This 207-nucleotide RNA was probed chemically with 2A3. For 2A3, 872 sequencing reads were counted. Values cover nucleotides 27 to 156. Conditions: 150 mM KOAc, 10 mM MgCl2 and 150 mM bicine (pH 8.5), 24 C.

RNA sequence: GGGAACGACUCGAGUAGAGUCGAAAAACUGCCAUACGUGGCAGAAACACGCCUUACCAGGACUAAACAGCGUGUCUAAAAAACAGUCCUUCUUACCUGAUCUGGAGGGUAGAUCAGGAAUACUAAAAAAAUCGGGUGAAGUUCGCUUCACCCGAAAGUCUAGUAGGUCGUUCGCGACCUACUAGACAAAAGAAACAACAACAACAAC
Reactivity to 2A3 in 0.01 (KOAc 150mM, MgCl2 10mM, bicine 150mM(pH8.5), 24C), signal-to-noise 1, nucleotides 027 to 156: a000c000u000g000c000c000a040u040a070c180g050u060g000g000c000a000g000a000a040a000c010a000c010g000c000c000u020u050a030c020c090a020g000g000a000c000u020a160a030a000c010a010g000c010g000u020g000u010c080u060a000a020a020a020a000a000c030a000g000u000c030c000u060u000c050u020u060a120c010c000u000g000a000u020c000u040g060g020a040g070g060g020u090a010g000a020u000c010a000g000g120a000a040u140a090c080u200a000a000a010a050a000a040a110u070c000g000g000g000u000g010a000a000g010u050u080c160g050c080u000u020c000a010c000c000c020g000a000a000a000